[RMDB]
RNA sequence: GGGAACGACUCGAGUAGAGUCGAAAAGAAGAGGGAAGAAGCCCACAACAUAACUUUGGCUGUUAUAUGGAAAGUUACAUUCAAGCAGGUGGUCUACAGCAGUGGACUGGCUCUGGGUUGGCGCUUUGUCUUUGCACUGGAUACUUCACCCCAUGAGCAAUCUAGAGUCCUUCGGGACUCUAGAUUGAAAAGAAACAACAACAACAAC
Reactivity to 2A3 in 0.01 (KOAc 150mM, MgCl2 10mM, bicine 150mM(pH8.5), 24C), signal-to-noise 2, nucleotides 027 to 156: g070a000a010g000a070g010g020g000a050a040g030a080a030g070c020c060c000a070c060a070a040c030a040u170a070a040c030u090u060u110g100g000c030u060g050u210u120a170u060a140u270g020g020a070a000a020g000u010u080a040c010a080u130u180c040a040a030g040c040a040g040g060u030g010g040u080c040u040a050c020a090g070c040a060g010u050g000g000a040c010u050g130g030c010u000c030u040g020g020g000u000u020g040g020c060g000c030u080u030u080g030u040c000u040u130u100g030c040a060c080u090g050g000a110u130a130c000u120u090c020a030c050c000c000c020a060u090g030a000g070
Reactivity to DMS in 0.01 (KOAc 150mM, MgCl2 10mM, bicine 150mM(pH8.5), 24C), signal-to-noise 1, nucleotides 027 to 156: g010a060a120g000a080g000g030g010a090a120g010a100a100g000c070c030c060a110c160a080a120c090a090u000a060a040c010u020u010u000g020g010c000u000g040u000u000a160u030a160u000g000g010a030a070a090g010u000u030a040c040a160u010u010c040a130a180g050c040a040g010g000u000g030g020u000c070u000a050c000a160g030c120a110g020u000g000g000a150c020u010g040g000c020u020c060u020g010g010g050u000u000g050g020c050g000c060u040u000u000g000u000c030u010u000u010g060c000a060c050u000g010g020a170u010a040c040u000u010c010a090c050c000c010c020a070u010g010a130g000